RNA sequence: GGGAACGACUCGAGUAGAGUCGAAAAGGAGGCAAGUUCGCUUGCCUCCAAAGAUGCUCAAAUUGACGCAAACAUCCGCGUCAUCGCGAGCAAGCGAGGAAAAAACCGUGAACUUCGGUUCACGGAACGUCAUUUUCAACUUCGGUUGAAAAUGACGAAAAGAAACAACAACAACAAC
Reactivity to DMS in 0.01 (KOAc 150mM, MgCl2 10mM, bicine 150mM(pH8.5), 24C), signal-to-noise 2, nucleotides 027 to 126: g000g000a050g000g010c000a000a000g000u010u020c160g050c030u000u000g000c030c010u000c000c000a000a060a110g010a100u000g000c000u000c030a030a260a140u030u020g000a010c000g070c000a200a160a180c130a050u000c130c230g000c030g000u000c020a000u000c100g030c300g010a030g000c040a030a090g030c000g020a170g020g000a000a030a040a070a080a050c000c000g000u000g000a000a000c000u000u000c240g020g000u010u000c000a000c000g010g020a000a020
The data come from the RNA Mapping Database (RMDB), library M2PK50. The record gives the reactivity of an RNA of 177 nucleotides to DMS. DMS (dimethyl sulfate) methylates the pairing face of unpaired adenines and cytosines. The RNA was probed in 150 mM KOAc, 10 mM MgCl2 and 150 mM bicine (pH 8.5) at 24 C.